[RMDB]
RNA sequence: GGGAACGACUCGAGUAGAGUCGAAAAAAAGAGGUAUACACAAACUGGAAGCGGGAUAUAAAAUGAAAUUUCAAUCAUGAUGCAGUUGUAUACAUGUUCCUGUAAAGGCAAGGACCAUACUGCACCACUCGUUUGCUAGAUUCGUCUAGCAAACGAGAAAAGAAACAACAACAACAAC
Reactivity to 2A3 in 0.01 (KOAc 150mM, MgCl2 10mM, bicine 150mM(pH8.5), 24C), signal-to-noise 1, nucleotides 027 to 126: a000a040a040g050a010g060g040u040a060u090a040c050a000c020a120a190a100c080u040g020g060a030a010g000c030g090g080g030a000u130a030u060a170a140a020a060u030g040a160a020a000u070u130u040c000a000a060u030c020a070u050g080a020u040g120c000a000g020u050u050g070u060a030u000a070c040a000u060g000u050u000c000c050u050g090u160a100a080a100g070g000c120a060a050g030g000a000c000c000a000u020a020c010u000g000c010a000c010c000a000
Reactivity to DMS in 0.01 (KOAc 150mM, MgCl2 10mM, bicine 150mM(pH8.5), 24C), signal-to-noise 1, nucleotides 027 to 126: a060a040a090g010a010g000g040u000a000u000a020c000a060c100a040a090a090c040u010g000g010a090a040g030c120g010g010g000a150u010a120u010a020a070a050a130u010g000a030a060a120u010u010u000c070a060a110u040c060a070u010g010a070u000g000c000a010g000u010u000g010u000a090u010a030c070a080u000g000u010u000c000c000u000g010u010a090a050a060g010g000c100a020a030g010g010a000c210c040a010u000a030c020u000g000c040a070c080c070a150